[RMDB]
RNA sequence: GGGAACGACUCGAGUAGAGUCGAAAAGACGGAAAAGAUCGAACCUAAGAAGAUCAGGAAGUGAGAGCCGAAUCCUAGGGCACCUAGGGACGCAUCGUCCGAUGCGAAAUAAACACGAACGUCGAAAGCAUAGUGGUCGAUUCGUCGACCACUAUGCAAAAGAAACAACAACAACAAC
Reactivity to 2A3 in 0.01 (KOAc 150mM, MgCl2 10mM, bicine 150mM(pH8.5), 24C), signal-to-noise 2, nucleotides 027 to 126: g030a010c010g000g060a070a090a060a030g020a050u090c030g010a110a100c010c020u010a000a000g070a030a060g010a090u060c070a000g030g050a050a150g020u080g010a050g000a010g050c000c040g060a120a010u110c020c000u000a000g070g020g060c140a070c020c010u000a000g040g000g050a050c060g000c000a000u000c010g300u080c000c230g000a000u000g000c000g010a000a020a070u160a010a000a000c040a000c010g030a140a060c000g000u000c000g010a030a000a000
Reactivity to DMS in 0.01 (KOAc 150mM, MgCl2 10mM, bicine 150mM(pH8.5), 24C), signal-to-noise 2, nucleotides 027 to 126: g000a050c010g000g010a130a130a060a110g000a000u040c010g000a000a110c050c150u000a090a040g000a120a010g000a040u000c060a150g000g000a090a190g000u030g000a060g000a100g010c040c030g000a100a100u020c000c010u000a050g010g030g020c140a040c000c000u000a000g000g000g010a130c000g010c040a060u000c000g010u020c200c080g000a010u000g030c000g040a090a020a050u000a020a120a090c150a030c020g000a090a090c110g000u000c010g000a110a060a060